Record summary:
Chemical mapping of a 207-nucleotide RNA with DMS and 2A3. The RNA was probed in 150 mM KOAc, 10 mM MgCl2 and 150 mM bicine (pH 8.5) at 24 C. For DMS, 14,495 sequencing reads were counted. It was measured as part of the RMDB library OK3TST. For 2A3, 11,728 sequencing reads were counted.
RNA sequence: GGGAACGACUCGAGUAGAGUCGAAAAUCUGCUCGGGAAAUAUGGGAGGAGUUAGCGAGCAAAAGCUCACUUUGUGUACCCUUGAGCAUUAGAAGCGGAGCACGGAACGCCGUUGUGCCUUGGCGUGCUGGACGAUUGUCAAGACGGUGAAUGUCACGACUAUAGACAUUUUCGAAUGUCUAUAGUCAAAAGAAACAACAACAACAAC
Reactivity to DMS in 0.01 (KOAc 150mM, MgCl2 10mM, bicine 150mM(pH8.5), 24C), signal-to-noise 4, nucleotides 027 to 156: u000c030u000g020c000u000c020g010g010g000a070a090a110u000a070u000g010g000g000a080g020g010a100g030u000u000a070g020c020g040a050g000c020a070a080a100a240g030c010u000c020a030c020u000u000u000g030u000g010u010a090c030c020c010u000u000g010a100g030c070a100u010u000a120g010a080a100g010c040g000g020a100g040c050a130c070g010g020a070a080c040g020c030c020g000u020u000g010u000g020c040c050u010u000g020g020c030g030u000g040c040u000g020g030a090c040g020a140u000u000g010u000c030a040a100g000a070c040g020g000u010g010a090a070u000g010u010c040a070c110
Reactivity to 2A3 in 0.01 (KOAc 150mM, MgCl2 10mM, bicine 150mM(pH8.5), 24C), signal-to-noise 8, nucleotides 027 to 156: u010c010u010g000c000u000c010g010g000g060a090a110a040u230a090u120g040g020g020a050g010g000a040g040u070u090a030g040c030g040a020g010c060a070a130a080a020g000c010u010c020a040c040u050u090u090g070u020g030u100a080c010c000c000u010u080g040a030g020c030a050u070u150a060g040a120a010g020c050g020g030a020g020c050a010c070g010g040a080a010c020g020c030c020g050u060u100g060u090g050c030c030u030u050g040g020c020g010u030g010c020u020g010g030a020c030g080a110u050u100g030u080c030a040a050g030a030c030g010g060u080g050a090a080u120g040u060c040a010c150